[RMDB]
RNA sequence: GGGAACGACUCGAGUAGAGUCGAAAACAACAUGCCAAAGAAAUUCAAAUUAAAGUUGCGCAAGGUGCAAAGCCUGGUGAAGGUGGUCAAUUACCUGGUACUAAGGUAUAUCCGUGGAUUGCAAAGAGGGGAAAGGUGUAUUCGUACACCUUUCCCCAAAAGAAACAACAACAACAAC
Reactivity to DMS in 0.01 (KOAc 150mM, MgCl2 10mM, bicine 150mM(pH8.5), 24C), signal-to-noise 1, nucleotides 027 to 126: c030a060a090c120a030u000g080c030c000a020a080a080g000a030a140a060u060u080c180a070a090a020u080u000a110a110a020g030u000u000g000c000g010c000a090a090g010g030u000g010c120a040a120a100g040c000c040u000g000g060u020g000a130a000g030g000u000g010g010u000c290a150a080u000u000a030c000c030u000g000g060u030a020c040u000a010a060g030g000u000a010u060a080u000c030c010g060u000g000g000a120u000u000g000c030a160a100a050g000a290